[RMDB]
Annotation
Conditions: 150 mM KOAc, 10 mM MgCl2 and 150 mM bicine (pH 8.5), 24 C. The record gives the reactivity of an RNA of 177 nucleotides to 2A3 and DMS. It was measured as part of the RMDB libraries RFM100 and RFMREP.
RNA sequence: GGGAACGACUCGAGUAGAGUCGAAAAGGCCUGUCGGGAAUAACCGACGUUAGGGAAUUCGGCAAGUUAGUCCCGUACGUUCGCAAUAAGGGAUGCCUGCCUCGGAAAGAGGCAGGUCGCAGUGACUUGCUGAUUGAAAGUUCGCUUUCAAUCAGCAAAAAGAAACAACAACAACAAC
Reactivity to 2A3 in 0.01 (KOAc 150mM, MgCl2 10mM, bicine 150mM(pH8.5), 24C), signal-to-noise 2, nucleotides 027 to 126: g070g030c000c000u030g010u010c000g010g010g080a110a170u160a210a100c000c020g010a010c010g000u040u120a050g020g010g050a040a070u090u050c010g010g000c060a020a070g000u100u110a000g010u000c010c000c000g000u000a040c050g010u010u070c050g030c110a020a060u110a120a050g010g030g020a000u030g040c000c000u000g000c000c000u000c000g060g220a250a200a100g010a040g000g020c030a000g000g000u000c010g000c030a080g060u060g050a020c010u000
Reactivity to DMS in 0.01 (KOAc 150mM, MgCl2 10mM, bicine 150mM(pH8.5), 24C), signal-to-noise 3, nucleotides 027 to 126: g000g020c010c010u000g000u000c000g020g000g010a180a100u050a120a150c010c000g000a020c010g000u010u020a050g000g010g010a160a160u010u000c020g000g020c000a030a010g010u010u010a070g000u010c010c000c000g000u010a110c210g020u000u050c120g010c020a060a060u030a060a190g000g000g010a040u010g000c010c000u000g010c000c000u010c000g000g010a080a140a110g000a010g000g020c000a000g000g020u000c080g020c160a110g000u000g000a030c030u000